[RMDB]
Structure probing data (2A3 and DMS) for a 177-nucleotide construct. The DMS profile rests on 4,831 reads. For DMS the reverse transcriptase was MarathonRT.
RNA sequence: GGGAACGACUCGAGUAGAGUCGAAAAUGGGAAACAAUUAUUAAUGACACGUGGCUCACUCACUACAUUUAGUAUUGCGAAUGACAUUGCGAAAUACUUUGCGAUUUUACCAGCCAUGUUUAUGGCGGCUAGUUUGAUCUUUCGAGAUCAAACUAGCAAAAGAAACAACAACAACAAC
Reactivity to 2A3 in 0.01 (KOAc 150mM, MgCl2 10mM, bicine 150mM(pH8.5), 24C), signal-to-noise 9, nucleotides 027 to 126: u100g010g000g060a070a100a010c070a040a040u120u090a050u070u140a220a110u170g050a040c020a000c110g040u020g020g000c010u020c060a040c020u030c010a020c030u110a040c020a050u070u090u070a050g020u050a040u020u070g050c040g050a070a050u090g030a070c050a090u060u130g010c020g040a050a060a020u090a040c050u050u050u070g040c040g110a110u030u020u020u140a090c020c020a010g010c010c000a020u070g170u100u200u140a020u020g030g010c000g010
Reactivity to DMS in 0.01 (KOAc 150mM, MgCl2 10mM, bicine 150mM(pH8.5), 24C), signal-to-noise 3, nucleotides 027 to 126: u000g000g000g010a090a070a080c080a090a060u030u010a080u010u040a050a100u010g010a130c130a070c150g000u000g010g010c050u010c100a060c070u030c080a070c030u040a100c060a040u000u010u010a040g000u000a040u030u010g000c040g040a040a050u010g000a070c210a070u000u010g020c040g010a080a050a040u040a030c040u010u000u000g000c100g000a070u000u000u020u010a140c070c040a100g000c040c010a020u000g000u030u010u020a070u000g000g010c000g010